[RMDB]
RNA sequence: GGGAACGACUCGAGUAGAGUCGAAAAGAUAUGGAUGUUCAGCUUUUGACGGAUCGGUGGUCGGAAACGACCACGAUCCGAUAAGCUGACAUCCUAAGUCAAACCGACAUCGGUUCGCCGAUGUCGGGAUAGAUGGUCCGUUCGCGGACCAUCUAUCAAAAGAAACAACAACAACAAC
Reactivity to 2A3 in 0.01 (KOAc 150mM, MgCl2 10mM, bicine 150mM(pH8.5), 24C), signal-to-noise 4, nucleotides 027 to 126: g020a020u040a010u100g010g000a000u010g060u300u140c010a000g000c020u190u220u300u300g300a300c180g000g000a010u030c090g300g160u060g010g000u030c000g000g000a030a040a030c000g000a010c000c000a010c000g010a000u000c000c000g000a000u010a010a000g010c010u010g000a000c000a000u000c000c000u000a020a000g020u030c040a040a090a120c010c000g000a020c000a000u000c000g000g110u090u130c300g000c160c010g020a000u010g000u000c000g000g010
Reactivity to DMS in 0.01 (KOAc 150mM, MgCl2 10mM, bicine 150mM(pH8.5), 24C), signal-to-noise 3, nucleotides 027 to 126: g000a030u000a300u030g000g000a010u010g010u030u000c000a010g010c010u000u000u000u000g030a230c130g010g010a010u000c000g060g050u010g000g020u000c010g020g010a040a050a130c000g020a020c020c000a010c000g000a000u000c010c010g010a030u000a000a000g000c000u000g000a020c000a000u000c010c000u000a010a020g000u000c020a080a120a300c000c000g010a010c000a000u000c000g030g010u020u010c240g020c020c000g000a010u010g010u000c020g000g020